[RMDB]
Source information:
Chemical mapping of a 207-nucleotide RNA with 2A3 and DMS.
RNA sequence: GGGAACGACUCGAGUAGAGUCGAAAACGAUCAGUACGUUCGCGUACUGAUCGAAGCUAUUGGAGACAAUAGCAAGCCGCAGACAUUAAUUCCCAGUAUUAAUGAUUAGAACAAGUACCGACCUCUUGUUCACUGCGGCAACUGGGAAGGUCGGUGAAAUGAUCAUAGGAUUCGUCCUAUGAUCAUUAAAAGAAACAACAACAACAAC
Reactivity to 2A3 in 0.01 (KOAc 150mM, MgCl2 10mM, bicine 150mM(pH8.5), 24C), signal-to-noise 4, nucleotides 027 to 156: c010g000a000u000c000a000g000u000a000c000g000u020u050c170g010c000g060u000a000c000u000g000a000u000c000g000a010a010g000c000u000a000u000u000g000g000a050g010a020c000a000a000u000a000g000c010a000a020g000c000c000g000c000a000g020a060c010a020u020u040a020a030u060u050c020c020c040a020g070u080a040u040u040a020a010u010g090a020u030u150a070g000a020a000c000a000a000g000u020a090c000c000g000a000c000c000u010c000u000u000g000u010u000c010a010c020u000g000c000g000g000c000a000a030c060u100g010g020g050a000a030g000g000u000c000g000g000u000g010a010
Reactivity to DMS in 0.01 (KOAc 150mM, MgCl2 10mM, bicine 150mM(pH8.5), 24C), signal-to-noise 5, nucleotides 027 to 156: c000g020a000u000c000a000g030u000a000c000g030u000u000c300g040c020g030u000a000c000u010g020a000u000c010g010a020a060g000c000u000a000u000u010g000g020a300g000a280c000a020a010u000a020g000c000a120a210g010c010c010g010c010a050g020a300c040a040u000u000a020a050u000u000c170c050c210a240g020u000a090u000u000a030a040u000g000a190u000u000a090g000a020a000c000a020a040g010u000a060c010c010g000a050c010c010u000c020u000u010g010u000u000c010a120c050u000g010c000g030g000c000a010a010c090u000g010g010g000a110a010g010g020u000c000g000g000u000g010a050
The 2A3 profile rests on 10,484 reads. It was measured as part of the RMDB library OK3TST. 2A3 adducts were read by reverse transcription with SuperScript II with manganese. DMS adducts were read by reverse transcription with MarathonRT.